Conditions: 150 mM KOAc, 10 mM MgCl2 and 150 mM bicine (pH 8.5), 24 C. Structure probing data (2A3 and DMS) for a 177-nucleotide construct. The data come from the RNA Mapping Database (RMDB), libraries RFM100 and RFMREP.
RNA sequence: GGGAACGACUCGAGUAGAGUCGAAAAUCUAUUAGUGGGAUACCACGCUUGUGGACCUUAUGCCCACACAGCCAUCCUCUAGUAAGUUUGUAAAAUGUCUGGUGAGAUGUGGGAACUUAUUGGAAACCUGGAGUAUCCAUUUCGAUGGAUACUCCAGAAAAGAAACAACAACAACAAC
Reactivity to 2A3 in 0.01 (KOAc 150mM, MgCl2 10mM, bicine 150mM(pH8.5), 24C), signal-to-noise 5, nucleotides 027 to 126: u060c020u020a080u080u130a080g020u070g030g020g010a020u040a090c020c000a020c030g070c070u170u300g000u000g020g030a100c030c020u130u100a090u290g070c020c020c010a000c010a000c020a000g030c030c040a070u060c010c000u000c010u000a020g020u030a100a020g020u030u060u110g170u130a090a100a050a050u060g040u020c010u020g140g070u210g160a080g000a040u010g030u030g010g000g010a000a020c010u060u010a040u080u060g050g000a090a040a020c000
Reactivity to DMS in 0.01 (KOAc 150mM, MgCl2 10mM, bicine 150mM(pH8.5), 24C), signal-to-noise 3, nucleotides 027 to 126: u010c050u020a070u030u000a070g010u000g000g010g000a040u020a130c030c000a030c000g000c240u030u030g000u020g010g030a170c090c240u000u050a080u010g010c010c020c000a020c020a100c170a060g000c090c110a040u000c070c050u020c010u000a010g000u000a010a000g010u000u000u010g000u010a060a060a110a060u000g010u000c010u000g000g040u020g010a050g010a010u000g010u040g020g030g020a060a030c020u000u010a040u000u010g010g000a030a080a170c190